[RMDB]
RNA sequence: GGGAACGACUCGAGUAGAGUCGAAAAACAACAGAUAGCUGGAACCAGCGUAGAAUUCUACGCAUAUCCAUAGCGAAUGGUACCUGUAAAGAAAAUAAUGAAAGAUGUACAAGUACCAACAGUUUUCAAUGCCAUGGUGAUGUCAAUCACAUAUGCACAUCCCCUCGUACUUCGGUACGAGGGGAUGAAAAGAAACAACAACAACAAC
Reactivity to 2A3 in 0.01 (KOAc 150mM, MgCl2 10mM, bicine 150mM(pH8.5), 24C), signal-to-noise 2, nucleotides 027 to 156: a000c010a000a000c010a030g100a180u140a040g000c010u030g050g000a020a020c010c020a070g000c000g010u010a000g100a130a300u300u100c000u000a010c000g000c000a000u060a010u200c040c000a040u100a080g000c000g040a030a030u100g070g000u000a010c000c000u000g000u040a020a070a070g200a050a090a010a080u260a020a090u150g130a030a000a110g070a010u060g000u100a000c010a000a030g000u000a000c000c040a000a050c010a030g020u020u000u100u070c000a150a070u050g000c030c000a000u050g030g030u010g000a000u060g110u190c050a060a150u010c000a000c020a050u150a020u040g000c000a010